[RMDB]
RNA sequence: GGGAACGACUCGAGUAGAGUCGAAAAUUGUGACACUCUGUGUCAGAUGAUUGAAGUUGUCUGAUGCAAUUUGAGCUUGCUAUAGCAAGAAAGUCUAACCUAUUCCAGUGUUCCCCUCCAUGAGACCCUUGUUGUCUCUCUUCGGAGAGACAACAAGAAAAGAAACAACAACAACAAC
Reactivity to DMS in 0.01 (KOAc 150mM, MgCl2 10mM, bicine 150mM(pH8.5), 24C), signal-to-noise 1, nucleotides 027 to 126: u000u080g030u000g000a000c030a290c080u010c010u010g000u000g000u000c000a000g000a000u000g000a000u000u000g000a120a250g000u010u000g030u020c000u050g010a000u000g000c000a050a170u000u000u080g000a060g040c140u000u000g000c000u000a140u060a280g040c050a010a020g000a060a080a080g000u000c000u040a060a080c070c000u000a000u020u000c000c030a080g030u120g000u000u000c000c000c000c030u000c040c040a100u000g000a040g000a230c070c120
Reactivity to 2A3 in 0.01 (KOAc 150mM, MgCl2 10mM, bicine 150mM(pH8.5), 24C), signal-to-noise 6, nucleotides 027 to 126: u080u120g100u080g040a000c010a010c020u060c030u060g010u000g000u000c000a000g000a000u020g030a020u050u250g200a270a120g090u020u020g010u000c000u010g000a010u010g000c020a040a080u160u050u240g020a020g050c000u010u020g000c020u080a050u110a300g010c010a000a010g030a120a090a000g030u000c010u040a030a070c000c000u000a030u050u010c030c020a010g010u010g030u020u000c000c010c000c010u070c060c020a130u140g020a020g030a120c010c010
Chemical mapping of a 177-nucleotide RNA with DMS and 2A3. The reactions ran in a buffer of 150 mM KOAc, 10 mM MgCl2 and 150 mM bicine (pH 8.5), at 24 C. For DMS, 1,245 sequencing reads were counted.